[RMDB]
RNA sequence: GGGAACGACUCGAGUAGAGUCGAAAAUCGUCGUGUCUUACGUGCUGCCUUUCGCGCCGCGGUUGUCCAGCUUGCGGGAACCGAGCAAACAAAGCAAAGCGGCUUUACCCUCAGCGAGGAGCUGCUAGACGCAUACGUGGUUCGCCACGUAUGCGUCAAAAGAAACAACAACAACAAC
Reactivity to DMS in 0.01 (KOAc 150mM, MgCl2 10mM, bicine 150mM(pH8.5), 24C), signal-to-noise 1, nucleotides 027 to 126: u000c080g000u030c030g000u000g010u000c000u060u060a030c070g050u020g050c000u000g000c000c010u000u000u030c000g000c090g000c040c000g010c020g000g000u000u000g000u010c100c000a150g000c090u000u000g000c060g060g000g000a120a090c040c010g060a000g000c070a090a020a110c300a040a010a090g000c020a050a160a010g020c030g010g010c060u000u000u090a060c060c000c000u000c100a110g030c020g020a140g000g040a170g000c010u000g000c100u030a090
Reactivity to 2A3 in 0.01 (KOAc 150mM, MgCl2 10mM, bicine 150mM(pH8.5), 24C), signal-to-noise 3, nucleotides 027 to 126: u070c030g020u000c000g020u010g070u080c070u100u060a080c100g040u150g050c020u040g010c010c010u060u090u070c100g010c010g000c020c000g040c020g060g020u070u080g070u090c020c020a010g030c030u070u160g030c050g050g030g000a030a040c040c000g010a020g050c060a050a080a060c040a080a010a080g110c020a070a140a090g010c000g040g000c000u030u080u120a110c030c000c000u060c040a050g080c040g090a040g050g000a000g020c000u030g000c000u040a030